[RMDB]
RNA sequence: GGGAACGACUCGAGUAGAGUCGAAAAAGAAAACGCCAAAAUGGAUUUAAAGUAUCCCUAGUAGGCGGGCAUGUUACCAUGCAAAGUUAUCGACAAUAACUUACUAGAAGAUCGAUAGAUCAAAAAAUCCAUACACAAGGUUCGCCUUGUGUAUGGAAAAAGAAACAACAACAACAAC
Reactivity to DMS in 0.01 (KOAc 150mM, MgCl2 10mM, bicine 150mM(pH8.5), 24C), signal-to-noise 1, nucleotides 027 to 126: a080g020a040a090a060a080c040g020c000c000a000a150a140a160u010g000g010a040u000u000u000a110a060a220g000u000a050u010c000c000c020u000a020g010u000a070g010g000c010g000g000g000c000a000u010g000u020u020a010c270c020a010u000g000c010a100a020a010g000u000u000a000u010c090g000a110c300a160a110u000a000a000c010u000u000a030c020u000a000g010a070a090g010a010u000c010g010a100u020a150g000a030u010c000a060a030a050a040a050a030

The record gives the reactivity of an RNA of 177 nucleotides to DMS. The RNA was probed in 150 mM KOAc, 10 mM MgCl2 and 150 mM bicine (pH 8.5) at 24 C. DMS adducts were read by reverse transcription with MarathonRT. Source: RMDB library M2PK90, as collected in RNAgym.